[RMDB]
RNA sequence: GGGAACGACUCGAGUAGAGUCGAAAAGAUAUGGAAAGCUCUUUUGACGCUCUCCGGGUCGGAAACGACCCAGGAGCGAUAAGAGCUUCCUAAGUCAAACGUUGAAAAACUUCGGUUUUUCAACGAAUCAAAUAGCCCUGUUCGCAGGGCUAUUUGAAAAAGAAACAACAACAACAAC
Reactivity to DMS in 0.01 (KOAc 150mM, MgCl2 10mM, bicine 150mM(pH8.5), 24C), signal-to-noise 1, nucleotides 027 to 126: g000a070u020a300u000g020g000a020a010a030g000c000u000c000u000u000u030u020g020a140c080g010c010u000c000u000c040c090g070g000g010u010c000g020g000a150a060a140c000g000a000c000c020c020a050g020g000a060g030c010g010a050u000a000a000g010a050g000c000u000u010c000c000u010a080a180g000u000c020a050a140a300c030g010u010u000g000a010a000a010a000a010c000u010u010c200g020g000u010u000u000u000u010c000a000a000c000g000a070a060